RNA sequence: GGGAACGACUCGAGUAGAGUCGAAAACAGUGAAGCGUGCCAGGGGCAAGGCAGAAAUCCACCGCCGAUUCAUACGAAAGAUUGCUUUCGACCAGCGUGAAGCUGUUGCUUGCGUCCUUCCUGUAGACGUGGAAGAACUGUGCCUCUGACUUCCACGCGAAAAAGAUAUCUUCGGAUAUCUUUUUCGAAAAGAAACAACAACAACAAC
Reactivity to 2A3 in 0.01 (KOAc 150mM, MgCl2 10mM, bicine 150mM(pH8.5), 24C), signal-to-noise 9, nucleotides 027 to 156: c030a010g030u040g160a110a010g040c050g050u050g020c050c030a040g000g000g000g010c030a040a050g070g000c020a030g100a070a100a030u080c070c040a060c070c040g070c020c020g020a070u080u160c060a060u110a160c040g040a040a050a020g080a060u120u290g070c000u020u010u020c010g040a050c050c030a020g000c020g070u150g140a120a020g020c010u020g030u070u080g000c020u020u030g010c020g020u010c000c000u020u030c010c010u080g060u130a060g020a110c010g000u010g010g000a020a010g010a070a050c050u100g040u070g110c000c000u020c010u010g020a020c000u000u020c010c000a010c010g010
Reactivity to DMS in 0.01 (KOAc 150mM, MgCl2 10mM, bicine 150mM(pH8.5), 24C), signal-to-noise 4, nucleotides 027 to 156: c040a100g010u010g020a050a100g000c030g030u000g020c040c040a100g000g030g030g030c020a050a100g020g020c050a110g010a080a100a150u000c050c030a100c040c040g020c000c010g020a060u000u000c040a100u000a180c070g020a080a080a070g010a210u000u000g010c030u000u000u000c020g020a060c060c030a130g000c020g030u000g010a080a180g030c010u010g010u000u000g000c020u000u000g020c060g020u000c020c020u000u000c020c010u010g020u010a140g010a110c020g050u000g010g010a020a020g010a080a090c040u000g040u000g010c020c020u020c010u030g020a230c010u000u000c010c010a030c020g020